[RMDB]
RNA sequence: GGGAACGACUCGAGUAGAGUCGAAAAGGCGAGGCCAAGACCCAGCCGGAAGAGAAGGCUAGAUCUCCCGACCCAAGCUCCUAGCACGGAUACCGAGCACCCACGCGGAGCACAUGCCGCGGAAUAGUAUAUGCUACUAUUUCGAUAGUAGCAUAUAAAAAGAAACAACAACAACAAC
Reactivity to DMS in 0.01 (KOAc 150mM, MgCl2 10mM, bicine 150mM(pH8.5), 24C), signal-to-noise 9, nucleotides 027 to 126: g010g010c040g000a130g010g010c040c040a090a100g010a110c030c010c020a160g020c020c020g010g000a100a080g010a100g010a120a090g000g010c030u010a060g010a130u010c030u000c010c030c030g010a100c050c010c030a090a090g010c030u000c040c030u000a070g010c040a080c050g010g000a100u010a060c050c030g000a070g000c050a120c020c010c030a100c030g010c010g000g000a080g010c130a060c200a070u040g000c010c000g000c010g000g010a060a060u030a090g010
Reactivity to 2A3 in 0.01 (KOAc 150mM, MgCl2 10mM, bicine 150mM(pH8.5), 24C), signal-to-noise 9, nucleotides 027 to 126: g050g010c050g040a040g030g040c030c040a060a020g050a090c000c010c010a010g020c010c010g040g020a130a030g060a020g040a160a040g040g000c030u040a030g010a130u020c020u020c010c010c010g040a060c000c000c010a020a030g020c000u020c010c020u040a020g020c040a020c050g030g000a030u040a070c010c020g010a010g010c010a040c010c000c000a020c010g010c000g010g010a030g100c040a030c020a110u190g030c000c000g000c010g020g030a040a050u090a070g110